[RMDB]
RNA sequence: GGGAACGACUCGAGUAGAGUCGAAAACACUGGUCGAGUGGACAUGCGCCGACAAUACACGGGGCUAAGCUCUGAACCGAAGCGGCGGGAUGAUUCAAAUCAUCGGUAGGGGAGCGUCCCAGCGGGGAUAUUCGAAGCGAUUCGUCGCUUCGAAUAUAAAAGAAACAACAACAACAAC
Reactivity to DMS in 0.01 (KOAc 150mM, MgCl2 10mM, bicine 150mM(pH8.5), 24C), signal-to-noise 4, nucleotides 027 to 126: c050a130c100u000g020g030u020c030g000a120g000u040g000g000a120c130a060u000g000c000g020c050c000g000a120c140a120a130u040a090c210a080c020g010g020g030g030c020u030a080a190g030c040u010c040u030g000a100a050c070c040g000a110a100g010c010g000g000c040g010g000g010a050u000g000a050u010u020c230a050a130a080u000c000a020u000c020g020g000u000a080g010g000g020g010a060g010c020g010u010c000c000c000a070g020c060g000g000g010g010
Reactivity to 2A3 in 0.01 (KOAc 150mM, MgCl2 10mM, bicine 150mM(pH8.5), 24C), signal-to-noise 3, nucleotides 027 to 126: c060a020c030u120g000g060u050c020g050a050g030u060g010g090a030c010a070u150g000c020g060c020c000g040a080c080a030a030u170a120c080a020c080g000g000g020g020c050u050a090a030g020c000u010c040u060g110a090a040c010c020g020a030a000g020c000g010g000c000g050g000g000a020u030g040a020u080u200c100a150a140a170u080c040a020u060c000g020g020u050a050g020g040g000g000a020g030c010g040u050c000c000c000a000g030c020g000g020g000g000
Structure probing data (DMS and 2A3) for a 177-nucleotide construct.
For 2A3 the reverse transcriptase was SuperScript II with manganese.
It was measured as part of the RMDB library RFM100.
Conditions: 150 mM KOAc, 10 mM MgCl2 and 150 mM bicine (pH 8.5), 24 C.
The DMS profile rests on 5,098 reads.